This 207-nucleotide RNA was probed chemically with 2A3. For 2A3 the reverse transcriptase was SuperScript II with manganese. Values cover nucleotides 27 to 156. Conditions: 150 mM KOAc, 10 mM MgCl2 and 150 mM bicine (pH 8.5), 24 C. The data come from the RNA Mapping Database (RMDB), library OK3TST.

[RMDB]
RNA sequence: GGGAACGACUCGAGUAGAGUCGAAAAGCGUACAGGUGUAAGUCUGCUAUGUAAUGCCUUAGGGGACUUAUACUAUCAAGUACGAGUACUGGUAGUUGUAGGUUGACCUACAGCUACCAGUACAUGUACUAGGUUAUACCUAGUACUAGGCAUUACACACAUGCAUGGACUUCGGUCCAUGCAUGUGAAAAGAAACAACAACAACAAC
Reactivity to 2A3 in 0.01 (KOAc 150mM, MgCl2 10mM, bicine 150mM(pH8.5), 24C), signal-to-noise 1, nucleotides 027 to 156: g190c000g000u000a020c020a050g110g000u000g000u030a060a010g000u000c010u010g200c070u140a030u050g040u070a020a020u010g010c000c010u050u120a060g010g000g070g030a000c000u000u000a000u030a020c020u040a120u270c090a250a080g000u000a000c000g010a020g010u000a000c000u000g000g000u000a000g000u000u010g010u020a030g080g080u110u300g300a300c000c000u000a000c000a000g000c000u000a000c000c000a000g000u000a000c000a000u000g000u010a000c000u000a000g000g000u010u200a090u090a220c020c000u000a000g000u020a000c000u000a020g000g030c010a000u010u000a000c020a010